[RMDB]
RNA sequence: GGGAACGACUCGAGUAGAGUCGAAAAUGGAAAUUCGUUUCCACAAAAUCCUAAGUCAACUAAGUACACAUCGAUCUUGUCAGCUACUCGGAAACGAGUAGCUUGGAUUUAGGGAGUGUACGAAAGUUGAUAUGGACAUACACUCUUUCGAGAGUAACUCACCAAUUCAUUUCGAUGAAUUGGUGAGAAAAGAAACAACAACAACAAC
Reactivity to 2A3 in 0.01 (KOAc 150mM, MgCl2 10mM, bicine 150mM(pH8.5), 24C), signal-to-noise 5, nucleotides 027 to 156: u100g020g030a010a030a010u080u050c140g060u030u010u000c010c010a050c030a040a160a020a050u000c020c000u060a180a020g020u000c000a010a000c010u020a060a000g010u010a000c010a000c020a240u090c030g090a060u070c010u030u060g050u060c020a000g000c000u000a000c000u000c020g030g020a050a080a080c000g000a000g000u010a000g000c030u000u030g020g000a000u120u100u130a050g020g000g000a070g000u010g000u010a000c000g010a120a050a000g000u000u010g000a000u010a020u020g000g010a010c020a060u190a040c060a020c030u020c000u020u090u170c180g090a020g010a000g020u020a020a030
Reactivity to DMS in 0.01 (KOAc 150mM, MgCl2 10mM, bicine 150mM(pH8.5), 24C), signal-to-noise 3, nucleotides 027 to 156: u000g000g000a010a050a040u000u000c200g010u000u000u000c000c010a070c080a110a080a190a060u000c000c000u000a070a250g010u000c020a040a030c020u000a060a300g000u000a050c030a010c000a240u000c100g010a060u000c030u000u000g010u010c070a040g030c010u000a000c000u000c000g010g000a140a120a260c010g010a030g020u010a000g020c010u000u010g010g010a030u020u000u000a020g000g030g000a050g060u000g020u000a000c000g000a070a050a090g010u000u000g040a030u010a250u000g010g010a070c040a090u000a130c120a070c010u000c010u000u000u020c120g010a040g020a060g010u000a030a150

Structure probing data (2A3 and DMS) for a 207-nucleotide construct.
Conditions: 150 mM KOAc, 10 mM MgCl2 and 150 mM bicine (pH 8.5), 24 C.
For DMS, 5,059 sequencing reads were counted.